[RMDB]
RNA sequence: GGGAACGACUCGAGUAGAGUCGAAAAUCGCCUUUUCUUCCUUUCUUCUACCCACUGUUCGAGGAUCUCCUCCCUCUCCUUCGAGGACGGGUUCGCGACGGGUUGGCUCAUCCUGAGAUCGGGGAGCAUGCCGAAUAGUUCGCUAUUCGGAAAAGAAACAACAACAACAAC
Reactivity to DMS in 0.01 (KOAc 150mM, MgCl2 10mM, bicine 150mM(pH8.5), 24C), signal-to-noise 9, nucleotides 027 to 129: u040c030g010c020c020u010u010u010u010c030u000u000c040c020u020u020u050c050u030u030c040u040a170c010c040c030a100c100u040g000u040u020c010g000a100g020g000a090u000c060u020c010c010u020c060c040c000u020c030u030c060c070u000u040c110g010a100g040g000a060c090g030g000g030u010u000c060g000c000g000a070c080g000g020g020u000u000g000g000c000u040c050a110u060c050c030u000g030a110g000a000u010c070g030g000g040g000a030g000c050a070u070g010
Reactivity to 2A3 in 0.01 (KOAc 150mM, MgCl2 10mM, bicine 150mM(pH8.5), 24C), signal-to-noise 9, nucleotides 027 to 129: u080c020g080c000c000u060u070u030u040c010u030u060c000c000u050u060u050c020u060u010c030u080a120c010c010c020a070c060u090g090u190u060c040g020a040g010g020a050u020c030u020c040c010u050c010c010c010u030c020u040c020c060u120u170c090g030a040g020g020a020c040g030g000g000u020u050c030g010c010g040a040c030g010g040g000u030u050g040g000c000u000c030a160u100c020c030u080g020a070g010a130u130c050g000g000g000g000a010g020c020a030u120g030